Structure probing data (2A3 and DMS) for a 177-nucleotide construct. For DMS, 1,761 sequencing reads were counted.

[RMDB]
RNA sequence: GGGAACGACUCGAGUAGAGUCGAAAAUCUUAGGAGUUCGCUCCUAAGAAAAGGGCGAGCCCGUGCCAGCUCUUCGGAGCAAUACUCGGCCAGUCACUCAGAAUGCGCUACCCUUCGGGGUAGCGAAACACAGCUUUAGUUUCGACUAAAGCUGUGUAAAAGAAACAACAACAACAAC
Reactivity to 2A3 in 0.01 (KOAc 150mM, MgCl2 10mM, bicine 150mM(pH8.5), 24C), signal-to-noise 1, nucleotides 027 to 126: u000c010u000u010a000g020g010a000g000u060u020c090g100c060u020c000c010u020a010a010g000a000a010a000a010g030g010g030c000g000a020g030c000c000c060g010u010g060c040c040a030g000c010u010c020u010u090c190g100g000a010g000c000a000a020u070a040c020u020c010g060g030c040c020a030g050u070c030a030c080u100c040a060g130a150a110u170g090c010g000c000u010a010c000c020c000u010u060c190g050g000g000g020u000a000g000c000g000a000a000
Reactivity to DMS in 0.01 (KOAc 150mM, MgCl2 10mM, bicine 150mM(pH8.5), 24C), signal-to-noise 2, nucleotides 027 to 126: u000c000u010u000a000g010g000a040g010u010u010c230g010c000u000c000c000u010a010a010g000a020a080a110a090g000g040g010c030g010a180g000c110c010c030g000u000g020c080c090a280g000c030u000c020u010u000c150g030g010a050g000c000a050a060u000a110c060u000c090g010g010c030c060a100g020u000c030a090c040u000c070a120g000a080a110u000g000c000g020c000u000a000c000c000c000u000u000c180g010g000g000g030u010a000g000c000g000a000a040
The RNA was probed in 150 mM KOAc, 10 mM MgCl2 and 150 mM bicine (pH 8.5) at 24 C.